[RMDB]
RNA sequence: GGGAACGACUCGAGUAGAGUCGAAAAUGACAAUAACAGCAAUAAUAACCUUUACUCAGCACAUGCUGCAUCCCAGGCACUUUGGUGCAGCACUUUACAUGACUUUCUGUCUUCCAUCCUCACAGUCACCCUUUGAGGUGGGUAUUAGGAUGAACCACACCCUAAUUUACUUCGGUAAAUUAGGGUGAAAAGAAACAACAACAACAAC
Reactivity to DMS in 0.01 (KOAc 150mM, MgCl2 10mM, bicine 150mM(pH8.5), 24C), signal-to-noise 2, nucleotides 027 to 156: u010g000a120c060a100a100u000a060a120c090a120g020c030a170a120u010a090a080u000a070a100c070c040u000u010u000a060c030u000c040a140g000c080a090c240a060u010g000c010u000g040c030a050u020c000c040c010a190g020g010c160a050c080u010u000u010g030g040u010g000c010a040g020c040a020c010u000u000u000a070c070a110u000g060a060c060u000u000u000c010u000g000u000c030u000u020c040c020a050u000c020c000u000c050a030c010a000g010u000c000a040c000c010c020u010u000u020g000a060g020g060u010g030g000g020u000a040u000u000a030g010g020a030u000g010a040a060c040c060a230
Reactivity to 2A3 in 0.01 (KOAc 150mM, MgCl2 10mM, bicine 150mM(pH8.5), 24C), signal-to-noise 8, nucleotides 027 to 156: u090g020a010c060a070a070u120a170a050c040a050g080c040a050a110u110a170a040u130a110a120c020c010u100u110u110a100c080u080c060a040g070c080a050c010a080u080g000c000u000g010c010a060u100c010c040c030a030g100g060c090a060c150u130u110u120g010g000u010g000c000a000g000c010a020c030u120u130u090a050c050a130u090g040a050c000u040u140u100c060u140g060u010c030u080u030c020c000a020u000c000c000u020c000a020c000a060g170u040c000a030c030c010c040u140u160u280g170a210g020g000u010g000g010g020u020a040u020u020a010g010g010a000u010g040a030a030c020c020a020
The record gives the reactivity of an RNA of 207 nucleotides to DMS and 2A3.
For DMS, 3,476 sequencing reads were counted.
The RNA was probed in 150 mM KOAc, 10 mM MgCl2 and 150 mM bicine (pH 8.5) at 24 C.
High 2A3 reactivity points to a flexible backbone, as in loops and unpaired stretches.
For DMS the reverse transcriptase was MarathonRT.